Structure probing data (2A3 and DMS) for a 207-nucleotide construct. The DMS profile rests on 4,468 reads.

[RMDB]
RNA sequence: GGGAACGACUCGAGUAGAGUCGAAAACGCUCAAGACGCUGGCCUAUGAGUUGUGAUUUCUGCCUUUUCCCCUUCCUCCUUGGGCUAAGCCAGACCAGAAAGGGCCCCGUGCGCAACGUGCUUCACAAUCUCUCAGGGAAAGCGGCUAACGUGGCGAAAAAUUAGCGGUAUUCGUACCGCUAAUUUUAAAAGAAACAACAACAACAAC
Reactivity to 2A3 in 0.01 (KOAc 150mM, MgCl2 10mM, bicine 150mM(pH8.5), 24C), signal-to-noise 1, nucleotides 027 to 156: c010g020c000u040c050a030a020g040a010c010g050c020u040g050g060c000c000u060a060u150g000a000g000u020u030g000u010g020a090u040u130u110c090u110g060c000c050u040u000u040u060c010c020c030c010u080u120c070c040u050c010c000u090u100g030g010g000c050u030a070a050g010c030c020a060g000a080c000c020a030g060a010a070a000g010g000g000c000c030c020c010g000u020g000c020g020c020a060a030c050g030u070g050c010u010u050c000a000c000a060a130u070c010u000c000u050c180a060g020g010g050a080a000a000g010c000g010g000c000u000a010a000c120g070u110g020g020c010g030a030
Reactivity to DMS in 0.01 (KOAc 150mM, MgCl2 10mM, bicine 150mM(pH8.5), 24C), signal-to-noise 2, nucleotides 027 to 156: c040g010c000u000c070a190a070g000a050c010g010c020u000g010g000c000c010u000a140u010g010a050g010u000u000g010u010g010a090u000u010u000c040u000g070c040c020u000u000u000u000c030c020c020c020u020u010c030c000u000c040c020u000u000g020g040g050c060u000a090a180g010c040c020a120g000a070c050c040a090g000a040a070a080g020g040g010c050c020c030c080g010u000g020c070g050c020a080a070c050g020u000g010c110u000u040c040a040c010a030a070u010c000u000c010u000c130a110g050g020g010a030a050a110g020c000g000g010c010u000a040a050c040g000u010g020g020c050g000a060